An RNA of 177 nucleotides, treated with DMS and 2A3 and read out base by base. The reactions ran in a buffer of 150 mM KOAc, 10 mM MgCl2 and 150 mM bicine (pH 8.5), at 24 C. The data come from the RNA Mapping Database (RMDB), library OK1LIB.
[RMDB]
RNA sequence: GGGAACGACUCGAGUAGAGUCGAAAAUUGGGUUAUGAUUAUUGUUGGAGUAUUUAUGGCAAUAGUUCUAUAUGCAUUAAAUUUACCAAUAAUGACUAUAGCUAUAGGAUUCUAUUUACCAAUUGCAGCUACUGAUAUUAUUCGUAAUAUCAGUAGCAAAAGAAACAACAACAACAAC
Reactivity to DMS in 0.01 (KOAc 150mM, MgCl2 10mM, bicine 150mM(pH8.5), 24C), signal-to-noise 4, nucleotides 027 to 126: u010u020g020g000g030u020u020a030u030g000a160u000u000a040u010u000g010u000u000g000g000a130g020u010a020u010u020u000a040u010g000g030c300a010a020u000a010g000u010u030c060u000a010u010a010u020g030c010a140u000u010a010a070a070u010u020u030a140c090c070a020a030u000a010a020u010g000a100c090u030a050u010a050g000c030u000a010u000a020g010g010a060u010u040c040u030a030u010u000u010a140c030c020a020a090u030u000g000c210a150
Reactivity to 2A3 in 0.01 (KOAc 150mM, MgCl2 10mM, bicine 150mM(pH8.5), 24C), signal-to-noise 7, nucleotides 027 to 126: u060u030g100g020g020u140u120a100u140g090a190u050u110a030u080u060g010u000u000g020g000a030g030u050a020u030u020u010a110u090g050g000c010a020a020u010a010g020u080u000c050u020a030u010a040u160g010c010a000u030u090a040a040a050u130u120u090a180c020c000a030a050u070a060a040u050g020a030c040u060a040u040a120g000c010u000a000u010a050g010g050a050u160u070c040u040a050u070u130u070a120c020c000a030a040u070u160g080c060a040